[RMDB]
Conditions: 150 mM KOAc, 10 mM MgCl2 and 150 mM bicine (pH 8.5), 24 C. Chemical mapping of a 207-nucleotide RNA with 2A3. 2A3 adducts were read by reverse transcription with SuperScript II with manganese. Source: RMDB library M2RFPK, as collected in RNAgym.
RNA sequence: GGGAACGACUCGAGUAGAGUCGAAAACGCACUCGCAGCUUAAUAACCUGCGCUGAGCCCUUCUCACCCAGCUUGCCUGUGUCCUAGGGAAUUGGAAGGUCAUCCUUCACAGGAUCGUGUGGAAGUCAUUACUCGUGAGUGUUCGCACUCACGAGAAUCACUCAUCCAACUUCGGUUGGAUGAGUGAAAAAGAAACAACAACAACAAC
Reactivity to 2A3 in 0.01 (KOAc 150mM, MgCl2 10mM, bicine 150mM(pH8.5), 24C), signal-to-noise 1, nucleotides 027 to 156: c030g040c010a030c040u030c060g000c010a000g000c030u030u040a020a020u040a080a020c000c000u000g000c020g040c110u020g000a020g010c010c010c000u050u010c090u100c030a040c010c000c000a000g010c060u090u160g080c000c000u030g030u060g040u110c000c050u050a110g000g020g080a060a040u110u080g060g000a040a030g080g010u090c030a070u080c000c030u030u070c030a020c000a080g030g020a090u110c080g030u030g000u010g070g080a090a000g070u020c040a050u120u160a080c000u000c020g000u000g000a010g000u000g060u090u160c250g000c070a000c000u000c000a000c000g010a000g000a000a000
Reactivities are given for positions 27 through 156.
For 2A3, 725 sequencing reads were counted.